Overview: Structure probing data (2A3 and DMS) for a 177-nucleotide construct. 2A3 adducts were read by reverse transcription with SuperScript II with manganese. The DMS profile rests on 899 reads.

RNA sequence: GGGAACGACUCGAGUAGAGUCGAAAAGUAACUCAGGAGUCAUAUCUGGCUAUCCAGAGAGAGCAGGUGAGUUUAGGCAAUCUGGAAAACCAUUAGCAAUACCUGCAUCUAGUGUUCCAGAACCAAAGGCAUCUUUUCCAUUCGUGGAAAAGAUGCCAAAAGAAACAACAACAACAAC
Reactivity to 2A3 in 0.01 (KOAc 150mM, MgCl2 10mM, bicine 150mM(pH8.5), 24C), signal-to-noise 1, nucleotides 027 to 126: g060u080a130a000c000u030c000a000g130g000a000g130u000c040a040u110a050u220c210u040g000g100c000u050a110u210c000c010a000g000a000g000a000g000a040g050c000a000g000g040u110g000a100g080u040u000u300a000g050g000c000a000a080u000c000u000g000g000a000a130a160a280c000c000a090u040u000a080g020c020a040a050u040a300c000c000u000g000c000a130u000c000u000a020g040u000g060u090u050c000c000a010g000a300a160c000c000a080a000a000
Reactivity to DMS in 0.01 (KOAc 150mM, MgCl2 10mM, bicine 150mM(pH8.5), 24C), signal-to-noise 1, nucleotides 027 to 126: g070u000a200a050c000u000c050a110g000g000a010g000u000c000a050u040a180u050c040u000g030g000c120u020a050u050c000c000a010g000a000g000a050g000a100g010c040a010g000g010u000g000a170g000u030u000u040a270g000g050c040a010a220u000c050u000g000g010a000a080a220a190c000c060a030u010u010a100g010c250a000a060u000a000c120c100u000g090c070a300u240c010u000a050g040u000g000u000u040c000c000a010g000a000a070c000c090a060a020a180